[RMDB]
RNA sequence: GGGAACGACUCGAGUAGAGUCGAAAAUACAUAAUCUCAAACAGUUGCGGCUUAGACUCAAGAGCGCCAACCCUGCUAUCCAGUUUUGAUAUCUGCUCAAUCGCUUUCACGGCAUCCACGUAACCGGAAUUAAUUACAGCACCCGCAUACUGGAUGAAGACAAAAACAAAUUCGUUUGUUUUUGUCUAAAAGAAACAACAACAACAAC
Reactivity to DMS in 0.01 (KOAc 150mM, MgCl2 10mM, bicine 150mM(pH8.5), 24C), signal-to-noise 2, nucleotides 027 to 156: u030a170c030a120u010a090a080u010c030u000c010a150a120a130c060a090g010u010u010g030c000g050g000c050u000u000a080g000a130c080u000c000a050a090g000a110g010c080g020c050c040a050a080c020c000c020u000g030c070u010a110u000c040c040a120g010u000u000u000u000g020a080u000a100u000c030u000g010c010u010c020a050a050u000c020g020c060u010u000u010c000a110c060g040g020c020a060u000c030c050a000c090g010u020a050a120c020c010g020g010a150a110u000u000a050a100u010u000a130c030a130g000c000a070c070c010c100g040c030a090u000a070c050u010g000g020a100u000g020a060
Reactivity to 2A3 in 0.01 (KOAc 150mM, MgCl2 10mM, bicine 150mM(pH8.5), 24C), signal-to-noise 4, nucleotides 027 to 156: u180a020c080a040u230a120a140u080c050u030c050a110a140a040c040a050g030u070u050g030c020g000g000c050u120u110a060g040a090c030u060c100a110a060g010a030g070c060g000c010c010a020a030c020c000c010u030g020c030u040a020u050c060c020a040g020u010u010u080u070g050a040u070a100u110c050u020g020c010u010c000a070a070u040c050g010c060u020u090u060c070a050c090g060g000c010a010u020c020c020a060c100g030u030a030a050c040c020g000g040a030a030u110u110a100a040u110u100a090c030a070g020c020a070c010c030c030g010c030a010u060a210c010u020g020g000a020u030g000a010